[RMDB]
RNA sequence: GGGAACGACUCGAGUAGAGUCGAAAAUGAAACACCCAGAAACCACUCCUGACCAGGAUUAUUUGUUAUCGGUGCCAGUAAGUUGUCCAGUGAUUUGUGUUAUCCAAUUGUGUCACUACACGAUUACCGUGUGCAACCAUUUCGAUGGUUGCACACGAAAAGAAACAACAACAACAAC
Reactivity to DMS in 0.01 (KOAc 150mM, MgCl2 10mM, bicine 150mM(pH8.5), 24C), signal-to-noise 2, nucleotides 027 to 126: u000g020a260a150a100c120a100c030c000c010a090g040a150a140a120c090c130a090c110u000c030c000u000g030a150c120c090a030g030g010a090u000u000a110u000u000u010g010u000u000a050u000c030g000g020u000g000c060c030a050g030u000a020a050g030u000u000g000u000c080c030a070g000u010g000a080u000u010u030g030u010g010u000u000a090u000c040c100a030a110u000u000g030u000g010u020c100a030c140u020a100c050a030c060g010a060u000u000a120c130
Structure probing data (DMS) for a 177-nucleotide construct.